[RMDB]
RNA sequence: GGGAACGACUCGAGUAGAGUCGAAAAAACAGAUUUUAACUGCAGCUACAAAAGCAGCAACAGGCCAGCAAAAGAGAAGUGCUAUCUCAGAGAGCAUGGCUUUCAGAGCCACAAGAGACAGCCUCACUGGCUGUUUCAGCUUGACUGCCAUGCAAAGUACACUGUAGACCUUCGGGUCUACAGUGUAAAAAGAAACAACAACAACAAC
Reactivity to 2A3 in 0.01 (KOAc 150mM, MgCl2 10mM, bicine 150mM(pH8.5), 24C), signal-to-noise 1, nucleotides 027 to 156: a000a000c140a030g040a080u120u260u110u130a100a040c010u060g150c000a090g040c070u110a050c110a140a170a060a050g000c010a010g030c020a040a040c020a050g030g010c030c060a030g010c090a090a070a180a000g100a000g000a100a000g030u100g150c070u050a050u030c010u000c160a080g170a000g000a000g050c000a000u000g000g000c000u080u000u010c010a030g020a020g110c090c000a110c090a300a040g000a000g010a000c000a000g000c010c000u090c000a120c230u260g020g000c000u000g010u000u000u000c000a000g000c000u000u000g010a000c000u010g010c010c030a000u020g010c000a010a010a020g010